[RMDB]
RNA sequence: GGGAACGACUCGAGUAGAGUCGAAAAGCAGAAGAGCCGUUUUCAAGUAGUGUUCGAUCGAUUACGUAUUAAUCAAUAUUCGAUUGAUUGGUCUGAGGUUAUCGACAAAAAAGAUUUGUCUAAGUCACUGAGAAGCAACCUUCGGGUUGCUUCUCAGAAAAGAAACAACAACAACAAC
Reactivity to 2A3 in 0.01 (KOAc 150mM, MgCl2 10mM, bicine 150mM(pH8.5), 24C), signal-to-noise 1, nucleotides 027 to 126: g200c130a000g000a190a070g000a140g020c000c030g040u010u010u010u010c010a130a000g140u140a000g000u040g030u000u080c040g040a020u000c020g020a030u020u000a100c010g040u240a000u070u040a090a020u050c050a000a000u190a260u270u190c160g030a080u050u050g000a000u010u010g010g010u140c050u050g090a020g010g040u030u200a000u080c080g070a020c000a000a000a000a000a240a000g000a080u020u020u020g000u070c060u240a040a000g030u000c100a000
Chemical mapping of a 177-nucleotide RNA with 2A3.
For 2A3, 296 sequencing reads were counted.
The reactions ran in a buffer of 150 mM KOAc, 10 mM MgCl2 and 150 mM bicine (pH 8.5), at 24 C.
Values cover nucleotides 27 to 126.